This 177-nucleotide RNA was probed chemically with DMS and 2A3. As a SHAPE reagent, 2A3 marks flexible, mostly unpaired nucleotides at the ribose 2'-OH.
RNA sequence: GGGAACGACUCGAGUAGAGUCGAAAAUACGCCAAUUUCGAUUGGCGUAACACCCAAACCGGCCGAAAGGCAUUUUAUGCGUACGGUGGCGAAAGCCUAAAAACGCACUGUCAUUCGUGACAGUGAAGUUGUUGUCAUGAUUCGUCAUGACAACAACAAAAGAAACAACAACAACAAC
Reactivity to DMS in 0.01 (KOAc 150mM, MgCl2 10mM, bicine 150mM(pH8.5), 24C), signal-to-noise 3, nucleotides 027 to 126: u000a010c000g000c000c000a000a010u000u010u020c140g010a040u000u000g000g000c000g000u000a000a080c170a160c040c000c000a050a110a270c080c050g000g000c010c020g000a090a070a100g000g020c010a050u000u010u000u010a070u000g000c020g010u010a170c060g000g000u000g000g040c000g000a140a050a130g000c010c010u000a050a020a060a070a050c110g010c000a010c010u000g000u010c010a040u000u030c180g020u000g020a020c000a000g000u000g010a050a080
Reactivity to 2A3 in 0.01 (KOAc 150mM, MgCl2 10mM, bicine 150mM(pH8.5), 24C), signal-to-noise 4, nucleotides 027 to 126: u040a000c000g000c000c010a000a010u020u060u120c200g120a020u000u000g000g000c010g010u000a000a010c020a030c020c000c000a010a050a030c030c030g090g020c010c010g050a090a030a030g020g000c000a000u020u040u010u050a100u070g020c020g000u020a070c030g050g020u030g040g000c030g030a090a010a000g000c010c020u060a060a050a030a010a010c040g000c010a010c000u000g000u000c010a030u050u060c190g100u030g000a000c010a000g000u010g070a070a030

Values are in units of 0.01, from 0 to 300, in steps of 10. The data come from the RNA Mapping Database (RMDB), library M2PK50.